[RMDB]
RNA sequence: GGGAACGACUCGAGUAGAGUCGAAAAGAAACGAACUCGAAAGAGUUCGAACGACGGAAAGCGAUGAGCAGCGAAAGAAACGCUGCACACCGCAUCGCACGGUGAACCGUCGAAGCCGGAAACGGCACUCUGCAGCGGUGUUCGCACCGCUGCAGAGAAAAGAAACAACAACAACAAC
Reactivity to DMS in 0.01 (KOAc 150mM, MgCl2 10mM, bicine 150mM(pH8.5), 24C), signal-to-noise 1, nucleotides 027 to 126: g000a150a100a300c000g000a000a000c000u000c000g000a150a000a080g000a040g000u000u000c000g000a160a170c010g020a100c040g000g000a290a040a110g000c000g000a010u000g000a000g010c000a010g030c000g000a100a100a110g030a300a150a020c000g150c000u000g000c000a040c190a140c040c010g000c000a170u040c010g000c030a180c050g020g000u030g000a060a220c000c000g000u000c000g000a110a030g000c000c000g000g000a100a160a080c000g000g000c000a040
Reactivity to 2A3 in 0.01 (KOAc 150mM, MgCl2 10mM, bicine 150mM(pH8.5), 24C), signal-to-noise 1, nucleotides 027 to 126: g160a010a070a000c000g000a000a010c000u000c000g000a000a010a000g000a000g000u000u000c000g010a020a000c000g000a030c020g020g000a070a120a000g050c000g000a020u070g010a020g060c000a000g040c030g030a160a050a050g190a050a230a000c010g000c010u030g010c000a070c020a000c000c070g000c040a040u000c010g020c010a020c000g170g150u130g050a030a030c000c010g060u000c000g010a030a050g020c040c000g000g000a210a000a000c000g010g000c000a010
The record gives the reactivity of an RNA of 177 nucleotides to DMS and 2A3. Conditions: 150 mM KOAc, 10 mM MgCl2 and 150 mM bicine (pH 8.5), 24 C. For 2A3, 919 sequencing reads were counted. For DMS the reverse transcriptase was MarathonRT. It was measured as part of the RMDB library OK1LIB. 2A3 adducts were read by reverse transcription with SuperScript II with manganese.